[RMDB]
RNA sequence: GGGAACGACUCGAGUAGAGUCGAAAACAUAGCGUUUCACAAUGUGCGCCAUUAACAUUGUUUAUGCAAGCACGUUUCGCAAUGUACGGCGCAGAAACAUUGCCAACACAAAUACUCUUCACGAUGUAAAACAUCGGUGCGUUCGCGCACCGAUGAACUUCAUAGUUGGGUUCGCCCAACUAUGAAGAAAAGAAACAACAACAACAAC
Reactivity to DMS in 0.01 (KOAc 150mM, MgCl2 10mM, bicine 150mM(pH8.5), 24C), signal-to-noise 1, nucleotides 027 to 156: c030a110u010a130g000c000g020u010u000u000c040a060c040a070a070u000g020u000g020c020g040c030c050a220u010u000a090a040c020a090u010u000g020u010u000u000a060u000g040c010a140a150g040c050a080c080g000u000u010u000c190g010c090a040a050u000g050u010a030c050g040g010c060g030c010a120g000a090a090a150c000a020u000u000g020c020c050a060a040c020a080c050a100a080a110u010a050c060u010c020u000u010c040a120c070g000a170u010g030u000a030a100a050a140c010a010u000c020g020g020u000g020c000g080u010u000c300g060c000g000c000a010c030c000g000a010u010g020a050a060
Reactivity to 2A3 in 0.01 (KOAc 150mM, MgCl2 10mM, bicine 150mM(pH8.5), 24C), signal-to-noise 5, nucleotides 027 to 156: c040a060u140a040g030c010g030u030u070u060c070a030c020a070a050u030g010u020g020c020g000c050c030a100u170u180a040a010c000a030u030u030g060u050u110u080a100u140g080c080a060a100g070c060a050c140g010u000u060u100c030g000c000a000a010u020g000u010a030c060g020g000c050g000c050a010g020a000a040a000c010a010u000u060g040c030c030a100a020c040a050c030a090a150a040u180a060c020u040c030u180u250c090a050c110g100a090u110g040u220a040a070a090a040c000a000u000c000g000g010u000g000c000g030u030u060c170g000c010g000c100a000c010c010g000a000u000g000a010a000
Source: RMDB library M2RFPK, as collected in RNAgym. Structure probing data (DMS and 2A3) for a 207-nucleotide construct. Reactivities are rounded to 0.1 and cut off at 0 and 3. Reactivities are given for positions 27 through 156. The reactions ran in a buffer of 150 mM KOAc, 10 mM MgCl2 and 150 mM bicine (pH 8.5), at 24 C.